[RMDB]
RNA sequence: GGGAACGACUCGAGUAGAGUCGAAAAACUACGAUACUUAUUACAAUAACUGCGGAUCUGGAGGACCCUAUGGUCGUUCAACGGAUUCUCUGAUUAGUUAUUACAAUUUCUCGGAGAUGCAACAACAUCUCAUGCGACGUGAAAGAAUACUUUCAGACCUUCCUAGGUAGUUCGCUACCUAGGAAGGAAAAGAAACAACAACAACAAC
Reactivity to 2A3 in 0.01 (KOAc 150mM, MgCl2 10mM, bicine 150mM(pH8.5), 24C), signal-to-noise 3, nucleotides 027 to 156: a000c130u190a090c040g090a090u160a120c050u210u290a150u220u230a080c030a130a110u070a130a020c000u050g000c020g040g020a000u010c000u060g040g040a030g080g020a020c020c000c100u210a260u300g000g040u170c050g060u080u050c030a120a060c050g060g070a060u060u000c080u000c000u020g040a130u030u130a010g000u020u050a000u020u110a030c030a120a100u020u140u030c070u040c020g010g000a000g000a010u010g000c050a230a090c000a060a030c000a120u010c010u030c030a040u070g040c050g080a060c090g090u040g000a020a000a010g080a040a000u090a240c070u040u050u040c040a040g050a130